Source information:
Structure probing data (2A3 and DMS) for a 207-nucleotide construct. The data come from the RNA Mapping Database (RMDB), library M2RFPK. Conditions: 150 mM KOAc, 10 mM MgCl2 and 150 mM bicine (pH 8.5), 24 C. For DMS the reverse transcriptase was MarathonRT. The 2A3 profile rests on 1,635 reads. Reactivities are given for positions 27 through 156.
RNA sequence: GGGAACGACUCGAGUAGAGUCGAAAAGUGCAUUCAUCAAUGCAGGUUAAGCCAAAGGGAUGUCACGACCGGAGGCCGACAAUCCAGGGAACCGGAUGUCAUCACGUUGUUGCAGUACCAGAUGGCAAAAAGAUCCGCUCGUUCGCGAGCGGAUCAAGGUAACAUAUAUCUUCGGAUAUAUGUUACCAAAAGAAACAACAACAACAAC
Reactivity to 2A3 in 0.01 (KOAc 150mM, MgCl2 10mM, bicine 150mM(pH8.5), 24C), signal-to-noise 2, nucleotides 027 to 156: g110u020g030c000a030u010u090c020a070u100c090a170a060u050g000c020a010g100g060u130u140a070a010g000c030c020a040a000a000g050g040g010a060u140g060u140c080a050c080g100a050c010c030g020g000a050g050g180c030c020g010a010c030a080a090u050c040c030a050g000g050g080a050a100c040c030g020g000a010u060g030u010c010a020u040c020a030c080g000u000u010g000u020u050g030c060a060g040u070a060c010c000a040g030a150u060g040g000c020a030a020a000a030a050g010a000u000c000c000g030c020u000c000g010u050u010c150g000c000g150a000g010c010g020g000a000u000c000a000a000
Reactivity to DMS in 0.01 (KOAc 150mM, MgCl2 10mM, bicine 150mM(pH8.5), 24C), signal-to-noise 2, nucleotides 027 to 156: g020u000g040c000a030u000u000c080a150u020c100a030a040u000g020c000a100g000g010u010u000a060a120g030c010c020a050a300a260g050g000g020a110u000g000u000c050a030c000g000a020c030c000g010g010a300g030g010c020c020g000a030c050a140a090u000c010c000a060g010g020g010a090a110c030c000g030g020a040u000g000u000c010a020u000c040a060c150g020u000u000g000u000u010g020c010a030g020u010a020c010c000a140g000a050u000g000g010c020a020a060a050a110a110g000a000u000c010c000g010c020u000c000g020u020u010c300g000c020g010a030g000c040g000g000a000u000c000a010a000